Structure probing data (2A3 and DMS) for a 170-nucleotide construct. For 2A3 the reverse transcriptase was SuperScript II with manganese. DMS (dimethyl sulfate) methylates the pairing face of unpaired adenines and cytosines. For DMS the reverse transcriptase was MarathonRT.
RNA sequence: GGGAACGACUCGAGUAGAGUCGAAAACAUAAGAUGGCGAGAAAUCCACUCAUGGGUCCAUCGUCCAUCUCCUUCUUACCUUUUGGCCGGCAUGGUCCCAGCCUCCUCGCUGGCGCCGGCUGGGCAACAAGUGAGCCGUUCGCGGCUCACAAAAGAAACAACAACAACAAC
Reactivity to 2A3 in 0.01 (KOAc 150mM, MgCl2 10mM, bicine 150mM(pH8.5), 24C), signal-to-noise 3, nucleotides 027 to 129: c040a030u170a030a020g020a010u030g010g000c010g000a000g020a010a080a000u000c000c000a020c110u270c060a290u240g020g000g010u000c000c030a010u010c010g090u080c040c000a000u010c010u020c000c000u030u000c020u040u140a120c000c020u100u050u030u080g100g000c010c010g000g000c060a140u050g040g020u070c000c000c000a000g040c000c020u080c010c000u000c080g020c010u030g000g000c000g000c000c000g040g010c020u010g020g000g000c000a020a040c000a210a000
Reactivity to DMS in 0.01 (KOAc 150mM, MgCl2 10mM, bicine 150mM(pH8.5), 24C), signal-to-noise 4, nucleotides 027 to 129: c240a110u040a100a020g040a010u010g010g030c090g050a070g000a130a160a080u050c020c000a090c280u010c300a090u030g040g000g060u020c070c050a270u020c030g040u050c000c010a060u000c040u010c050c100u060u030c110u110u030a140c090c030u000u040u000u010g000g000c080c010g030g060c000a030u070g030g010u060c300c000c010a030g080c000c130u060c140c150u030c110g050c000u040g000g000c010g100c030c050g030g030c030u020g010g000g070c100a060a060c280a100a040